[RMDB]
RNA sequence: GGGAACGACUCGAGUAGAGUCGAAAAUAACUGACUGCUUCGCCACGUCCGAGUCUUCAGAGUUCGUGUUCGAGGUUGGUUCGUACUUGUGCCUGGUGGGCCAUGUCUUGCUUUUGAGGACGCGUUGCCUAUCGCUGAUGUUCGCAUCAGCGAUAGGAAAAGAAACAACAACAACAAC
Reactivity to DMS in 0.01 (KOAc 150mM, MgCl2 10mM, bicine 150mM(pH8.5), 24C), signal-to-noise 2, nucleotides 027 to 126: u040a130a120c070u000g000a090c040u000g010c060u000u000c060g020c300c030a150c020g060u000c060c000g000a160g020u040c010u050u000c110a050g000a220g000u040u000c000g040u000g010u010u020c070g020a080g000g020u020u020g050g010u020u010c130g020u000a010c030u000u030g000u000g000c000c020u000g040g070u000g020g010g020c040c050a100u000g030u000c040u020u000g020c120u010u000u030u010g000a020g020g020a050c000g000c060g030u000u000g010
Reactivity to 2A3 in 0.01 (KOAc 150mM, MgCl2 10mM, bicine 150mM(pH8.5), 24C), signal-to-noise 4, nucleotides 027 to 126: u130a020a070c030u030g070a020c000u020g000c000u060u020c020g000c000c020a050c010g010u000c040c010g030a040g110u030c020u070u060c080a050g010a020g120u030u060c010g010u040g000u100u140c000g020a050g030g030u100u090g050g040u050u030c010g010u030a060c050u050u080g050u080g080c040c020u030g080g000u090g030g030g000c020c010a060u080g060u010c040u030u090g070c010u040u090u120u210g050a060g030g010a000c000g010c030g100u060u100g080
Record summary: This 177-nucleotide RNA was probed chemically with DMS and 2A3. The reactions ran in a buffer of 150 mM KOAc, 10 mM MgCl2 and 150 mM bicine (pH 8.5), at 24 C. For 2A3, 2,654 sequencing reads were counted.